[RMDB]
RNA sequence: GGGAACGACUCGAGUAGAGUCGAAAACGUAACAGCGAACAACAUCGUUCGUUUCUCCCGUCAAGCCGCCCCCGUGGCUGCCUGACACUCUUAACGGAGACGGGGUGAGGUCAGCCUUGUCACCCAACAUUUCAACUGAAUUCGUUCAGUUGAAAUGAAAAGAAACAACAACAACAAC
Reactivity to DMS in 0.01 (KOAc 150mM, MgCl2 10mM, bicine 150mM(pH8.5), 24C), signal-to-noise 9, nucleotides 027 to 126: c150g010u020a070a080c160a060g000c010g010a020a040c050a110a160c220a130u020c130g000u000u000c030g010u000u000u000c060u000c020c010c040g020u000c050a040a060g010c010c070g000c010c000c020c140c200g010u020g000g020c010u000g010c020c040u000g010a060c030a160c110u010c030u000u000a120a140c180g000g000a080g010a080c100g010g000g000g010u000g000a130g020g000u020c100a140g010c040c030u010u010g010u000c030a070c020c010c050a090a180
Reactivity to 2A3 in 0.01 (KOAc 150mM, MgCl2 10mM, bicine 150mM(pH8.5), 24C), signal-to-noise 9, nucleotides 027 to 126: c090g060u110a090a020c020a060g020c010g010a010a020c030a030a060c020a260u170c110g010u020u010c010g000u010u040u010c060u010c000c010c000g010u020c020a020a010g000c010c010g010c000c020c000c020c060g060u170g010g000c000u000g010c000c010u020g010a010c010a070c040u070c010u100u130a090a050c080g040g000a050g020a040c030g030g010g000g010u030g040a040g030g160u110c050a030g030c010c000u020u040g030u010c020a050c020c010c000a020a040

Structure probing data (DMS and 2A3) for a 177-nucleotide construct. Source: RMDB libraries RFM100 and RFMREP, as collected in RNAgym. 2A3 adducts were read by reverse transcription with SuperScript II with manganese. DMS adducts were read by reverse transcription with MarathonRT. The reactions ran in a buffer of 150 mM KOAc, 10 mM MgCl2 and 150 mM bicine (pH 8.5), at 24 C.